Notes: An RNA of 177 nucleotides, treated with DMS and 2A3 and read out base by base.
RNA sequence: GGGAACGACUCGAGUAGAGUCGAAAAAAAAGAGACUCCGGACAGUGAUCUUGGCACCAACUAGGGUUGUCGCUGCUGAGAUGGAGGAGGCCUUGAGAGGACUUCCGGUGCGUUACAUGACAACAGCUAGUACUAUGACCUUCGGGUCAUAGUACUAAAAAGAAACAACAACAACAAC
Reactivity to DMS in 0.01 (KOAc 150mM, MgCl2 10mM, bicine 150mM(pH8.5), 24C), signal-to-noise 3, nucleotides 027 to 126: a060a050a110a100g000a170g020a060c030u000c010c010g030g010a110c080a050g020u020g000a030u000c010u000u010g010g040c000a050c070c030a020a030c110u020a100g010g000g010u000u000g020u010c100g040c090u010g020c010u010g000a050g030a030u000g000g010a120g000g010a040g010g000c040c000u000u000g010a140g020a100g000g000a120c050u010u000c010c020g000g000u010g010c060g000u030u020a070c150a080u040g010a060c130a020a050c130a080g020c160
Reactivity to 2A3 in 0.01 (KOAc 150mM, MgCl2 10mM, bicine 150mM(pH8.5), 24C), signal-to-noise 1, nucleotides 027 to 126: a000a000a000a000g150a000g020a010c010u000c000c000g040g020a050c030a070g080u080g090a020u030c000u030u060g020g010c010a000c000c000a060a000c000u090a130g260g140g000u040u040g040u050c040g020c100u020g000c000u040g000a030g000a090u050g000g050a070g040g000a060g040g000c000c020u020u050g060a110g030a030g050g040a060c010u070u000c020c010g070g000u060g030c020g000u030u060a070c080a120u150g080a050c030a090a000c010a060g070c030
For 2A3, 1,447 sequencing reads were counted. Conditions: 150 mM KOAc, 10 mM MgCl2 and 150 mM bicine (pH 8.5), 24 C.